[RMDB]
RNA sequence: GGGAACGACUCGAGUAGAGUCGAAAAGACGUAAUCCGCGCAAAUCCACAAACGCCAACGAUGAGCGUUUCGAUGUAGCCGCUUAAGGCAACAGCCGGGGCCGCCUGAGCCCUGUUACCAAAGACGGGAAACUCGAUGCCAUUCGUGGCAUCGAGAAGCUAAAGAGAAUAUUCGUAUUCUCUUUAGCAAAAGAAACAACAACAACAAC
Reactivity to 2A3 in 0.01 (KOAc 150mM, MgCl2 10mM, bicine 150mM(pH8.5), 24C), signal-to-noise 6, nucleotides 027 to 156: g040a010c030g040u040a070a040u070c060c020g020c010g000c050a100a070a080u060c030c020a040c090a050a020a000c020g010c020c020a130a070c180g160a180u170g040a070g040c000g000u000u030u040c060g040a030u070g030u080a040g030c020c030g030c090u140u170a060a060g000g000c020a050a030c000a100g040c030c020g010g000g000g000c020c030g060c010c030u020g020a020g020c010c000c000u030g050u060u090a040c010c020a040a020a000g100a030c040g000g010g000a050a060a040c000u000c000g000a000u000g010c000c020a020u040u050c200g090u090g000g000c000a010u000c000g000a000g000a000a000
Reactivity to DMS in 0.01 (KOAc 150mM, MgCl2 10mM, bicine 150mM(pH8.5), 24C), signal-to-noise 1, nucleotides 027 to 156: g010a090c030g050u000a090a080u000c060c010g050c040g060c050a040a030a110u000c010c040a040c040a010a150a040c020g020c000c030a070a210c060g030a200u000g000a100g000c050g000u000u000u000c040g010a140u010g000u000a100g010c000c000g020c090u010u000a090a230g010g030c000a020a060c000a050g000c050c010g010g020g000g010c050c050g030c060c080u000g000a100g010c000c000c010u000g000u020u000a050c010c040a010a180a100g020a060c030g020g010g010a120a030a190c000u000c000g020a010u010g010c000c000a110u000u010c250g050u000g020g030c010a010u000c000g010a000g000a010a020